The record gives the reactivity of an RNA of 177 nucleotides to DMS and 2A3. The data come from the RNA Mapping Database (RMDB), library TTRDES. High 2A3 reactivity points to a flexible backbone, as in loops and unpaired stretches. For DMS the reverse transcriptase was MarathonRT.
RNA sequence: GGGAACGACUCGAGUAGAGUCGAAAAGAUAUGGAUCUUCCCAUACAGCGCAGAUACAGAGUCGGAAACGACUCUGAGUAGCUGUGGGAGAUCCUAAGUCAAAGAAGUUAGCUUCGGCUAACUUCAAGAUAGCCAUUGUGUUCGCACAAUGGCUAUCAAAAGAAACAACAACAACAAC
Reactivity to DMS in 0.01 (KOAc 150mM, MgCl2 10mM, bicine 150mM(pH8.5), 24C), signal-to-noise 2, nucleotides 027 to 126: g000a020u000a010u000g010g020a000u000c000u000u000c000c000c300a190u010a300c130a020g020c000g050c130a200g010a020u020a020c000a000g010a030g010u000c010g000g000a010a000a020c000g010a010c000u000c000u020g000a030g000u000a010g020c000u000g030u000g000g000g010a020g000a010u000c000c000u000a000a060g000u010c000a090a150a120g020a010a000g010u010u000a000g000c000u000u010c180g020g000c000u010a010a000c000u000u000c010a090a090
Reactivity to 2A3 in 0.01 (KOAc 150mM, MgCl2 10mM, bicine 150mM(pH8.5), 24C), signal-to-noise 2, nucleotides 027 to 126: g000a000u010a020u040g000g000a000u050c020u100u100c050c020c020a030u300a120c180a010g030c020g220c280a020g000a040u020a020c010a010g000a000g020u000c000g020g000a000a000a020c010g010a010c010u000c010u000g000a000g000u000a020g000c040u080g050u100g020g000g000a010g000a010u000c010c000u000a000a000g000u000c020a090a000a280g000a000a000g000u000u010a000g000c010u060u100c300g050g000c000u000a000a000c000u000u010c000a000a000